[RMDB]
RNA sequence: GGGAACGACUCGAGUAGAGUCGAAAAGUGCGCGGUGGGGUUGGACAGCGGAAAGACCAACGGGCGCGGCGUGUUGGCGAGCGCGGCCUUCACGAUGUCCUCGUCGAAGGUGCCGGGGACACCGGAGGCAUAGCUAGCAGUUCGCUGCUAGCUAUGCAAAAGAAACAACAACAACAAC
Reactivity to DMS in 0.01 (KOAc 150mM, MgCl2 10mM, bicine 150mM(pH8.5), 24C), signal-to-noise 3, nucleotides 027 to 126: g000u020g020c040g000c060g000g000u000g010g010g000g010u010u010g020g010a120c110a070g030c040g000g000a050a110a070g000a130c030c050a070a060c070g010g010g000c060g030c050g000g000c040g000u020g030u000u010g000g020c050g000a090g010c030g010c040g010g010c000c010u000u030c010a090c020g020a090u000g000u020c060c010u000c010g010u000c060g020a110a090g000g030u040g000c060c010g000g000g020g000a060c070a020c010c000g000g010a090g000
Reactivity to 2A3 in 0.01 (KOAc 150mM, MgCl2 10mM, bicine 150mM(pH8.5), 24C), signal-to-noise 5, nucleotides 027 to 126: g110u100g010c070g000c000g050g040u080g020g040g000g040u050u040g030g030a040c030a030g020c060g020g030a110a070a030g050a060c020c020a060a030c040g020g010g000c080g000c020g040g040c020g000u070g020u040u070g030g020c030g010a050g060c060g000c000g040g050c000c000u030u030c040a060c050g010a040u090g020u050c000c010u020c010g010u010c040g040a130a070g110g060u160g030c030c010g010g000g000g000a000c020a010c010c000g010g020a030g040
About this RNA: Chemical mapping of a 177-nucleotide RNA with DMS and 2A3. For DMS the reverse transcriptase was MarathonRT. The reactions ran in a buffer of 150 mM KOAc, 10 mM MgCl2 and 150 mM bicine (pH 8.5), at 24 C. For DMS, 6,644 sequencing reads were counted. Source: RMDB library OK1LIB, as collected in RNAgym.